[RMDB]
RNA sequence: GGGAACGACUCGAGUAGAGUCGAAAAUGCUGAAGGGCUAAGUCCUUUGAAGGAAGGGUCAUACUAUGUAAGGAAGGGAUUUGGUUUUAGGAAGCCAAUUUAUUAAGAUAAGUGAAAGCACAUGAAGCUUAUACACGGAUUUCGAUCCGUGUAUAAGAAAAGAAACAACAACAACAAC
Reactivity to DMS in 0.01 (KOAc 150mM, MgCl2 10mM, bicine 150mM(pH8.5), 24C), signal-to-noise 9, nucleotides 027 to 126: u030g020c020u010g010a110a070g000g000g020c040u010a080a130g010u010c010c010u000u010u020g020a150a080g000g010a050a050g000g000g000u010c100a100u020a080c130u010a070u020g010u010a040a060g000g010a070a030g000g010g010a130u010u000u000g010g000u000u010u000u020a120g000g010a100a060g010c010c020a030a030u020u010u010a050u020u020a070a080g010a090u000a060a090g010u010g000a080a070a070g020c060a050c110a090u020g010a100a090g010
Reactivity to 2A3 in 0.01 (KOAc 150mM, MgCl2 10mM, bicine 150mM(pH8.5), 24C), signal-to-noise 9, nucleotides 027 to 126: u130g000c040u080g050a060a040g070g010g000c040u070a060a020g050u030c010c000u060u040u140g140a100a030g030g020a010a030g030g000g010u020c010a040u050a160c070u150a130u280g060u130a040a030g040g060a030a010g030g000g010a010u030u020u030g030g030u020u050u050u110a090g050g030a040a000g000c000c010a020a000u100u100u060a110u100u130a140a040g060a140u080a130a020g030u020g100a150a060a020g050c030a040c010a070u120g060a060a000g000